[RMDB]
RNA sequence: GGGAACGACUCGAGUAGAGUCGAAAAAUCAGAGGGCGCUAUCAUGCAAACUCGGAUUGUCUGCUCAUGCACAGAACCAACUACCGAUAACUAACAGUGCAUGAAGGUUAGUUAUUCCAUAUUAAUUAAAACUCGUAAUUCUUCGGAAUUACGAGAAUCUAAGUAACUUGUUCGCAAGUUACUUAGAAAAAGAAACAACAACAACAAC
Reactivity to DMS in 0.01 (KOAc 150mM, MgCl2 10mM, bicine 150mM(pH8.5), 24C), signal-to-noise 5, nucleotides 027 to 156: a040u000c040a060g020a070g030g010g020c300g010c060u000a130u010c140a120u020g020c010a090a300a260c020u000c010g010g020a030u000u000g000u010c030u010g010c010u000c030a030u000g030c010a060c010a040g000a080a150c050c070a090a090c110u000a160c050c030g010a110u010a030a050c030u010a040a060c050a140g010u000g020c020a030u010g010a030a170g020g000u000u000a030g010u000u010a040u000u000c050c030a100u000a160u010u010a070a150u010u010a030a050a070a200c000u000c010g020u000a010a000u000u000c010u000u010c300g040g000a040a020u000u000a000c000g010a010g010a020a020
Reactivity to 2A3 in 0.01 (KOAc 150mM, MgCl2 10mM, bicine 150mM(pH8.5), 24C), signal-to-noise 9, nucleotides 027 to 156: a000u010c010a010g000a000g010g030g000c010g010c020u110a140u300c110a070u300g000c020a020a010a020c000u000c000g000g000a010u010u040g040u010c030u040g030c000u000c000a000u010g000c010a000c000a020g050a130a100c060c030a100a090c060u190a130c040c080g040a020u010a010a010c000u000a010a000c020a060g030u010g050c000a010u010g020a020a020g110g000u010u000a000g000u000u000a010u090u070c030c000a070u100a090u270u220a220a100u110u140a050a100a070a110c000u000c000g000u000a000a000u000u000c000u010u060c170g080g000a000a000u000u000a000c000g000a000g000a000a000
This 207-nucleotide RNA was probed chemically with DMS and 2A3. For DMS the reverse transcriptase was MarathonRT. Values cover nucleotides 27 to 156. It was measured as part of the RMDB library M2RFOK.